Description: Structure probing data (2A3 and DMS) for a 177-nucleotide construct. The 2A3 profile rests on 833 reads. The RNA was probed in 150 mM KOAc, 10 mM MgCl2 and 150 mM bicine (pH 8.5) at 24 C. The DMS profile rests on 1,811 reads. 2A3 adducts were read by reverse transcription with SuperScript II with manganese. In probing experiments dimethyl sulfate is read out at A N1 and C N3, which are open when not base-paired. Values are in units of 0.01, from 0 to 300, in steps of 10.
RNA sequence: GGGAACGACUCGAGUAGAGUCGAAAAGUGACGGUGGAAAAAGGCUGGUGGUGGGACGACCCCGACCCGCUGCGGGUCGUCCGGGUCAAUCUGGAAGCCCCCAUCGAACUCACCCGGCUGGUGCUGCCGAGGGCACUAUGUUCGCAUAGUGCCCUCGAAAAGAAACAACAACAACAAC
Reactivity to 2A3 in 0.01 (KOAc 150mM, MgCl2 10mM, bicine 150mM(pH8.5), 24C), signal-to-noise 1, nucleotides 027 to 126: g100u080g070a160c000g010g010u040g080g020a090a000a010a110a140g080g000c050u070g020g080u050g000g050u130g030g060g000a000c050g000a010c030c040c010c000g020a060c000c010c000g090c130u190g030c200g000g000g000u010c000g000u000c000c000g000g030g000u030c010a020a110u020c050u010g120g030a070a000g000c000c030c000c010c000a000u020c000g030a020a020c010u000c000a090c000c070c020g040g000c050u040g040g020u060g040c000u050g020c020
Reactivity to DMS in 0.01 (KOAc 150mM, MgCl2 10mM, bicine 150mM(pH8.5), 24C), signal-to-noise 2, nucleotides 027 to 126: g000u020g010a130c080g020g000u010g010g010a010a070a040a140a290g000g000c000u020g000g020u000g020g020u010g010g010g000a100c110g010a020c040c020c000c040g000a080c070c090c030g020c200u040g090c200g000g000g030u000c000g000u020c060c020g010g000g010u010c120a220a030u040c010u020g040g020a090a110g000c000c000c150c000c000a000u000c050g010a230a070c020u000c080a130c020c030c040g000g000c050u000g010g000u000g000c070u000g000c140